[RMDB]
An RNA of 177 nucleotides, treated with DMS and 2A3 and read out base by base. Reactivities are given for positions 27 through 126. For 2A3, 3,772 sequencing reads were counted.
RNA sequence: GGGAACGACUCGAGUAGAGUCGAAAAUUUCAAUAUGCAUCAUUCUAAGUUGCAAAACUAAAUGAAAAAUCAAGCUUGUUGAGGUUGACACCUCCCAGAAUCAUCUGCUCUCUGCAGGGCUUUAUUAAGCAUUAGAUAUGUUCGCAUAUCUAAUGCUAAAAGAAACAACAACAACAAC
Reactivity to DMS in 0.01 (KOAc 150mM, MgCl2 10mM, bicine 150mM(pH8.5), 24C), signal-to-noise 5, nucleotides 027 to 126: u000u000u010c020a030a040u000a050u000g000c030a280u000c010a020u000u000c110u020a130a050g000u000u000g010c280a060a090a020a020c020u000a070a040a030u010g000a000a110a080a120a130u010c210a100a120g010c030u000u000g020u000u000g000a020g000g010u000u000g010a120c230a070c220c120u000c000c010c020a100g000a090a090u010c110a060u010c050u000g010c020u000c190u010c150u010g010c060a030g010g000g000c110u000u010u000a070u010u000a100
Reactivity to 2A3 in 0.01 (KOAc 150mM, MgCl2 10mM, bicine 150mM(pH8.5), 24C), signal-to-noise 3, nucleotides 027 to 126: u000u000u020c010a030a020u030a030u110g000c010a040u000c000a020u060u070c050u230a170a000g010u010u010g000c000a030a080a020a010c010u030a020a020a100u060g080a140a100a070a030a070u120c080a090a030g030c020u050u080g000u010u020g010a030g020g000u020u060g030a030c030a050c050c010u010c000c010c000a040g140a100a080u110c030a040u020c020u030g010c010u030c010u030c040u120g050c020a040g060g050g010c050u180u180u020a150u110u090a080